[RMDB]
RNA sequence: GGGAACGACUCGAGUAGAGUCGAAAAGAUAUGGAGCAUUCCGAGCAUCGAUCCACGUUAUGGGAUAAAUAUAUCGGAAACGAUAUAUGAAGCCCAUAACGUGGGGAGCUCCGAAUGCUCCUAAGUCCAAGAUGGUGUACUUCGGUACACCAUCUUGAAAAGAAACAACAACAACAAC
Reactivity to DMS in 0.01 (KOAc 150mM, MgCl2 10mM, bicine 150mM(pH8.5), 24C), signal-to-noise 2, nucleotides 027 to 126: g000a150u010a280u000g000g030a020g020c000a020u000u000c020c300g010a050g050c010a300u030c230g000a030u010c000c000a000c000g010u000u010a020u000g000g000g010a020u010a230a110a020u000a000u010a010u000c000g010g030a150a120a230c010g000a020u000a000u000a000u000g000a120a200g000c020c000c020a020u010a000a020c010g020u000g000g000g000g000a020g000c000u010c020c190g050a040a000u000g000c000u010c010c000u030a000a070g000u000c100